[RMDB]
RNA sequence: GGGAACGACUCGAGUAGAGUCGAAAAUGUGCGGGGAAAAAGAAAUGGUGCAAACGCUGGACGCGAUUCGAGCAAAGCGGCGGCAAAAUUGCACCGCCGAUCGAAAGUUAUUCCUCAGCCAGCGCAACAUAGCGUGGAGUUUCGACUCCACGCUAUGAAAAGAAACAACAACAACAAC
Reactivity to DMS in 0.01 (KOAc 150mM, MgCl2 10mM, bicine 150mM(pH8.5), 24C), signal-to-noise 4, nucleotides 027 to 126: u020g030u040g040c060g000g020g000g020a020a020a070a100a090g000a100a090a090u060g010g000u000g020c020a040a070a110c160g000c000u000g010g010a220c010g020c010g010a190u010u020c100g000a130g010c150a060a120a300g000c000g000g000c020g000g000c090a030a050a100a110u040u010g000c020a030c040c000g010c070c090g000a090u000c110g010a070a080a120g000u010u030a140u030u010c000c020u010c060a120g000c000c000a040g010c060g000c080a060a140
Reactivity to 2A3 in 0.01 (KOAc 150mM, MgCl2 10mM, bicine 150mM(pH8.5), 24C), signal-to-noise 4, nucleotides 027 to 126: u170g050u140g030c010g030g010g000g050a020a050a020a010a000g140a020a130a020u200g020g000u020g000c000a020a020a000c050g000c000u030g010g080a110c030g000c030g070a020u100u110c060g030a070g110c090a110a090a020g010c000g010g000c010g000g000c000a000a000a010a200u070u040g000c020a000c010c000g000c000c000g020a090u110c050g060a060a060a020g030u070u100a070u070u060c000c000u020c000a000g000c020c000a050g030c020g020c050a030a110